[RMDB]
RNA sequence: GGGAACGACUCGAGUAGAGUCGAAAAGAUUAAGUGGGAGCGUCGCCCUCUCGGUGCAUCGGAUAUUAAUUAGCCAGUGCGUGGCAAUACGCAUAUUGAUGUCUACUUUGGCGUAGACUCUGCCAAUUUAAGGAUUGUUGGGCAAUCCAGCCCUAGAACUACGCGUAAUAUUCGUAUUACGCGUAGUAAAAGAAACAACAACAACAAC
Reactivity to 2A3 in 0.01 (KOAc 150mM, MgCl2 10mM, bicine 150mM(pH8.5), 24C), signal-to-noise 4, nucleotides 027 to 156: g070a060u160u170a060a020g050u060g000g020g000a030g010c040g020u020c020g030c020c020c000u050c000u020c040g050g020u020g010c020a040u040c020g050g000a010u030a060u190u160a180a080u090u070a060g010c010c020a010g030u020g010c030g010u010g000g030c070a020a020u140a040c010g010c020a010u060a080u080u080g040a040u090g010u010c030u030a020c030u130u080u120g050g000c110g000u020a040g010a050c010u000c020u070g030c030c000a090a110u040u140u110a080a040g050g030a120u060u050g060u080u080g050g000g010c000a010a030u000c020c020a010g000c000c000c000u010a040g010a020
Reactivity to DMS in 0.01 (KOAc 150mM, MgCl2 10mM, bicine 150mM(pH8.5), 24C), signal-to-noise 3, nucleotides 027 to 156: g020a130u000u000a030a090g010u010g000g000g000a030g000c070g010u000c080g030c040c010c030u010c030u000c050g030g050u020g030c030a090u000c050g010g010a080u000a080u010u000a040a150u000u000a090g010c000c040a120g060u000g000c030g030u010g030g000c080a080a090u000a050c010g030c040a060u000a100u000u000g010a070u020g020u000c030u000a030c040u000u000u010g020g000c110g040u000a050g000a050c020u000c050u000g000c030c020a040a070u000u010u000a050a100g010g000a120u000u000g000u010u000g000g030g030c060a060a150u000c060c050a150g020c010c010c010u000a100g000a110
Structure probing data (2A3 and DMS) for a 207-nucleotide construct. DMS adducts were read by reverse transcription with MarathonRT.